[RMDB]
RNA sequence: GGGAACGACUCGAGUAGAGUCGAAAAGCGGCUCGUCCACGGACAAGCUGAGGGCGUUGGCCGCCGCGGCGGCGGAGACGGCGCCGCUGGAGCGCAUGGGGAGCGGGGCGAGCGCGGUGGUGGACGCCAGCAGCAAAGGUUUCGACCUUUGCUGCUGAAAAGAAACAACAACAACAAC
Reactivity to 2A3 in 0.01 (KOAc 150mM, MgCl2 10mM, bicine 150mM(pH8.5), 24C), signal-to-noise 1, nucleotides 027 to 126: g020c040g020g000c000u010c010g000u000c010c040a090c170g080g040a050c030a110a020g020c020u030g040a130g120g060g000c020g020u050u040g130g010c010c020g000c000c010g030c020g010g000c050g010g130c050g020g000a110g040a100c060g040g130c000g000c010c010g000c020u030g030g060a140g020c030g000c030a060u130g020g030g000g000a040g110c080g000g010g000g040c010g020a070g090c030g000c010g010g000u010g050g000u050g070g000a030c030g010c000
Reactivity to DMS in 0.01 (KOAc 150mM, MgCl2 10mM, bicine 150mM(pH8.5), 24C), signal-to-noise 2, nucleotides 027 to 126: g000c010g010g000c000u000c030g030u000c010c020a150c280g030g000a050c060a040a070g020c020u020g000a100g030g010g010c010g020u000u000g010g000c020c010g030c020c000g020c040g000g010c050g030g020c040g000g000a140g020a120c100g030g000c010g020c010c010g020c050u000g020g000a170g010c020g030c080a070u010g010g000g000g030a140g020c050g010g000g010g020c090g000a090g050c010g010c030g000g030u000g000g020u000g000g000a080c060g010c060
This 177-nucleotide RNA was probed chemically with 2A3 and DMS. The reactions ran in a buffer of 150 mM KOAc, 10 mM MgCl2 and 150 mM bicine (pH 8.5), at 24 C. For 2A3, 1,612 sequencing reads were counted. Values cover nucleotides 27 to 126. 2A3 adducts were read by reverse transcription with SuperScript II with manganese.